[RMDB]
Conditions: 150 mM KOAc, 10 mM MgCl2 and 150 mM bicine (pH 8.5), 24 C. Chemical mapping of a 207-nucleotide RNA with 2A3. The 2A3 profile rests on 1,408 reads. It was measured as part of the RMDB library OK3TST. 2A3 adducts were read by reverse transcription with SuperScript II with manganese. Reactivities are given for positions 27 through 156.
RNA sequence: GGGAACGACUCGAGUAGAGUCGAAAAGCCGCCGCCUCUGAGUACGUGGAAGGACCCCCUGGGAGUGGGAAGACUUUUCACCUGGUCAAAGAUGUGCUAGCCGUGGUCGGUAGCGCGACCUUGGUUGUGCCCACCCACGCGUCCAUGCUGGACUGCACCUUCUUCACUUCUUCGGAAGUGAAGAAGGAAAAGAAACAACAACAACAAC
Reactivity to 2A3 in 0.01 (KOAc 150mM, MgCl2 10mM, bicine 150mM(pH8.5), 24C), signal-to-noise 2, nucleotides 027 to 156: g030c010c020g020c020c020g040c030c030u060c060u050g020a020g130u140a080c030g000u070g030g030a040a030g030g020a070c000c000c000c000c040u060g050g090g000a090g070u150g010g000g030a050a040g090a110c060u030u050u020u040c080a040c040c040u080g010g010u030c030a100a060a050g060a110u100g020u070g030c040u050a030g030c030c010g030u060g020g040u070c000g030g030u040a040g030c060g000c010g030a000c000c000u030u180g030g000u010u080g050u020g000c000c000c000a050c010c020c000a020c020g000c020g010u000c000c000a070u160g110c030u060g020g020a010c020u040g000c000a020